[RMDB]
Background:
The data come from the RNA Mapping Database (RMDB), library TTRDEL. Chemical mapping of a 177-nucleotide RNA with 2A3 and DMS. The reactions ran in a buffer of 150 mM KOAc, 10 mM MgCl2 and 150 mM bicine (pH 8.5), at 24 C.
RNA sequence: GGGAACGACUCGAGUAGAGUCGAAAAGAUAUGGAGAAAGGGAGCACCGGUCGGAAACGACCGAAGUGCGCCGGUGAAAUACCUUCUCCUAAGUCAAAAGUUGUACACGCUUCGGCGUGUACAACAACCUUGUGUACUUGUUCGCAAGUACACAAGGAAAAGAAACAACAACAACAAC
Reactivity to 2A3 in 0.01 (KOAc 150mM, MgCl2 10mM, bicine 150mM(pH8.5), 24C), signal-to-noise 2, nucleotides 027 to 126: g000a030u110a040u130g030g010a030g000a070a130a120g050g020g010a100g050c010a000c000c020g000g070u120c010g000g030a110a080a100c030g030a030c020c020g020a090a050g000u030g060c070g000c030c010g010g040u110g080a230a270a050u220a070c010c000u010u000c000u000c010c000u040a120a040g050u020c010a000a080a140a080g000u000u020g010u000a010c000a010c010g000c020u040u140c240g120g000c000g000u020g010u000a000c000a000a000c000a000a000
Reactivity to DMS in 0.01 (KOAc 150mM, MgCl2 10mM, bicine 150mM(pH8.5), 24C), signal-to-noise 2, nucleotides 027 to 126: g000a070u000a300u020g000g010a030g010a030a060a090g020g000g000a110g010c010a010c000c000g000g000u000c000g000g020a070a080a190c040g020a030c020c010g000a050a060g010u000g000c050g010c050c070g030g000u000g020a080a120a110u010a080c030c020u010u000c000u000c000c000u020a030a180g010u020c070a050a050a090a130g030u000u000g010u000a000c010a000c000g030c010u000u030c150g040g050c010g020u010g010u000a000c010a010a010c000a060a070